Chemical mapping of a 207-nucleotide RNA with 2A3. Conditions: 150 mM KOAc, 10 mM MgCl2 and 150 mM bicine (pH 8.5), 24 C. It was measured as part of the RMDB library M2RFOK.
RNA sequence: GGGAACGACUCGAGUAGAGUCGAAAAACUGCAUCUACGGAUGCAGAACUACGUUCAUCCAAUUUAUUUGGGCGCAUGAAAUGAGAAUAGGGAACGGGAUUCUCAUACGCAGGCUACGGCCUGCGAAAAAACUCCUUAUGCUUCGGCAUAAGGAGAAGUUAUCCGAAGAGUUCGCUCUUCGGAUAACAAAAGAAACAACAACAACAAC
Reactivity to 2A3 in 0.01 (KOAc 150mM, MgCl2 10mM, bicine 150mM(pH8.5), 24C), signal-to-noise 1, nucleotides 027 to 156: a000c010u000g000c010a000u000c020u020a030c240g130g000a010u000g000c000a000g010a010a010c030u110a040c030g000u000u010c010a100u060c010c020a060a060u060u130u230a120u030u170u120g030g000g000c050g010c050a040u100g080a110a110a050u050g010a020g040a070a010u000a040g020g040g040a010a000c010g010g060g000a020u000u000c010u000c010a010u030a080c040g010c000a000g000g020c040u020a150c270g060g010c010c050u000g000c020g020a000a000a000a000a000a000c000u000c000c000u000u000a000u000g010c020u060u070c180g230g000c000a000u000a000a000g000g000a000g000a000a000